[RMDB]
RNA sequence: GGGAACGACUCGAGUAGAGUCGAAAAACGAUGCGAAACGGGUUCCCUCCGACCCCCGGGGGACCGAUACCCUGGCGGGGUGCGCCCCCGUACGGGUGGGCCGCAUAGCCGACAGCCGUCGCAACCAUUGUCUGUAAUUCUUCGGAAUUACAGACAAAAAAGAAACAACAACAACAAC
Reactivity to DMS in 0.01 (KOAc 150mM, MgCl2 10mM, bicine 150mM(pH8.5), 24C), signal-to-noise 4, nucleotides 027 to 126: a090c080g000a080u000g000c030g010a050a110a130c060g000g000g010u000u010c020c010c010u000c100c110g010a300c020c010c000c050c060g000g010g000g020g000a020c080c020g000a070u000a070c100c090c030u000g010g000c040g010g000g010g000u020g010c070g000c050c000c000c000c000g020u020a040c250g000g000g010u030g010g000g010c050c020g010c020a030u000a080g000c000c010g010a050c050a080g000c060c030g000u000c000g020c050a080a130c050c040a130
Reactivity to 2A3 in 0.01 (KOAc 150mM, MgCl2 10mM, bicine 150mM(pH8.5), 24C), signal-to-noise 3, nucleotides 027 to 126: a000c040g010a040u030g010c040g030a060a040a090c050g030g000g010u080u130c000c010c000u020c010c040g080a050c000c000c000c000c000g000g010g000g010g010a010c070c000g010a050u070a060c010c010c010u040g090g020c070g010g010g000g000u010g020c070g010c000c000c000c000c000g050u090a090c060g040g000g000u060g010g020g000c030c010g030c020a030u080a060g130c020c020g030a040c040a020g030c030c040g030u020c010g000c010a010a020c010c020a100